[RMDB]
RNA sequence: GGGAACGACUCGAGUAGAGUCGAAAAAAAUUAUCCAAUAGCGCAGGGUUGAGCGCUAAAGCCCGCAUAAAACGCCACACACCAUAAAGAAUGGUGAUAAAGGCAAUAAAAGCGAUAAUUGCGCCACUAUAUAUUCGUAUUUCGAUACGAAUAUAUAAAAAGAAACAACAACAACAAC
Reactivity to 2A3 in 0.01 (KOAc 150mM, MgCl2 10mM, bicine 150mM(pH8.5), 24C), signal-to-noise 2, nucleotides 027 to 126: a000a000a010u120u070a060u060c020c010a070a070u060a050g030c000g020c030a080g090g050g050u110u100g130a080g030c010g000c010u010a020a000a000g020c000c000c010g010c020a010u140a100a080a000a010c040g000c000c000a020c000a010c000a000c050c010a020u050a100a230a050g190a080a030u060g000g000u000g000a000u030a000a050a000g000g000c000a000a030u080a020a060a010a010g040c020g030a040u070a060a110u080u070g010c030g010c010c020a020c020
Reactivity to DMS in 0.01 (KOAc 150mM, MgCl2 10mM, bicine 150mM(pH8.5), 24C), signal-to-noise 6, nucleotides 027 to 126: a090a040a060u010u000a040u000c010c030a120a150u000a050g010c040g020c020a080g020g020g010u010u000g010a150g000c010g010c000u000a010a070a140g020c070c030c020g020c100a090u010a050a060a120a110c180g010c010c010a080c290a140c000a010c010c000a010u010a080a110a140g010a100a030u000g010g010u010g010a080u010a040a090a140g000g010c010a040a070u010a050a050a090a090g010c050g000a030u000a020a060u000u000g010c050g010c030c060a090c230